Chemical mapping of a 177-nucleotide RNA with DMS and 2A3.
The RNA was probed in 150 mM KOAc, 10 mM MgCl2 and 150 mM bicine (pH 8.5) at 24 C.
For 2A3, 1,467 sequencing reads were counted.
DMS adducts were read by reverse transcription with MarathonRT.
RNA sequence: GGGAACGACUCGAGUAGAGUCGAAAAAUACAAUGUCUAUCAUUUCUCCCAGAUCAGCAGCUCCCAGCUCGGGGAGGAGACUUUCGGCGUCACGUCGGGGUCAAGAUCGAGAAUAUCGUCGGACGAAGUCCACGUGACUGUUCGCAGUCACGUGGACAAAAGAAACAACAACAACAAC
Reactivity to DMS in 0.01 (KOAc 150mM, MgCl2 10mM, bicine 150mM(pH8.5), 24C), signal-to-noise 2, nucleotides 027 to 126: a150u000a090c120a060a070u020g000u000c040u000a040u050c100a240u000u000u000c020u000c000c000c040a150g000a050u040c150a070g000c090a110g000c080u000c010c000c010a150g000c060u000c060g010g010g010g010a020g020g000a090g000a040c010u010u010u000c020g030g000c020g000u010c230a040c100g020u000c000g000g010g000g000u000c010a130a030g000a040u020c030g010a030g010a180a070u000a030u010c040g020u000c060g020g040a080c030g020a100a100
Reactivity to 2A3 in 0.01 (KOAc 150mM, MgCl2 10mM, bicine 150mM(pH8.5), 24C), signal-to-noise 2, nucleotides 027 to 126: a030u270a040c100a050a140u150g020u040c030u050a080u070c030a050u010u080u000c020u000c050c000c000a070g000a200u170c080a000g090c000a010g040c000u000c000c010c000a050g000c040u040c090g000g040g050g010a000g000g000a050g000a000c020u150u210u170c140g000g040c040g080u170c110a010c270g020u030c010g000g000g000g030u020c050a010a020g030a010u060c040g030a010g020a200a010u100a020u110c050g060u070c050g010g010a000c040g030a130a050